Conditions: 150 mM KOAc, 10 mM MgCl2 and 150 mM bicine (pH 8.5), 24 C. The record gives the reactivity of an RNA of 207 nucleotides to 2A3. As a SHAPE reagent, 2A3 marks flexible, mostly unpaired nucleotides at the ribose 2'-OH. For 2A3 the reverse transcriptase was SuperScript II with manganese.

RNA sequence: GGGAACGACUCGAGUAGAGUCGAAAAGUGAUAGUAUAGCCAAGAAGGCUGACCUGGGGAUGAAAUUGGGCAGUCCAACACACUUGCAUUCGUCAAGGAUCUUGAUCUCAUUCAUCAAGAACUCGGUCACUUCCUUUGGCUUCUCUUGCAGAUUAUAACCCAGCGUAAAUUUCGAUUUACGCUGGGUAAAAGAAACAACAACAACAAC
Reactivity to 2A3 in 0.01 (KOAc 150mM, MgCl2 10mM, bicine 150mM(pH8.5), 24C), signal-to-noise 1, nucleotides 027 to 156: g050u060g030a100u100a100g040u140a000u120a160g000c000c000a000a000g050a000a000g030g060c220u030g000a020c030c050u110g000g000g000g000a030u030g060a020a060a080u120u030g000g040g000c050a000g060u000c050c020a040a000c040a000c000a000c040u010u020g000c020a100u150u070c140g170u190c060a000a010g040g010a010u080c030u090u090g080a130u060c010u000c040a070u030u030c000a000u000c080a140a060g100a180a080c000u000c090g000g010u000c000a000c030u050u000c000c050u070u000u000g000g000c000u030u000c030u000c000u040u050g010c030a040g000a290u130u240a050u110a180